Structure probing data (2A3) for a 177-nucleotide construct. The 2A3 profile rests on 297 reads. Reactivities are given for positions 27 through 126. The RNA was probed in 150 mM KOAc, 10 mM MgCl2 and 150 mM bicine (pH 8.5) at 24 C. The data come from the RNA Mapping Database (RMDB), library OK1LIB.

[RMDB]
RNA sequence: GGGAACGACUCGAGUAGAGUCGAAAAUAAACUCAAUUAGAGAGUUUAAAAGCAAAAGAUAUCCAAUAAUCCUAAAUCUUUUUACAUUCUCUUUUACAAAUAGGCUAUAUUCAGAACUACCUAAUACCGCUAGUGGCUAUUUCGAUAGCCACUAGCGAAAAGAAACAACAACAACAAC
Reactivity to 2A3 in 0.01 (KOAc 150mM, MgCl2 10mM, bicine 150mM(pH8.5), 24C), signal-to-noise 1, nucleotides 027 to 126: u010a000a000a000c020u060c020a000a120u130u130a090g000a000g000a060g030u000u000u200a020a040a000a020g130c110a000a040a170a000g020a000u130a000u300c110c010a000a090u110a230a040u010c010c010u120a000a230a300u170c020u160u300u050u040u150a000c000a040u010u000c000u000c000u020u050u090u190a140c000a090a300a230u260a170g000g080c040u060a020u020a020u170u160c020a020g030a190a110c000u040a080c000c020u190a100a000u210a200c080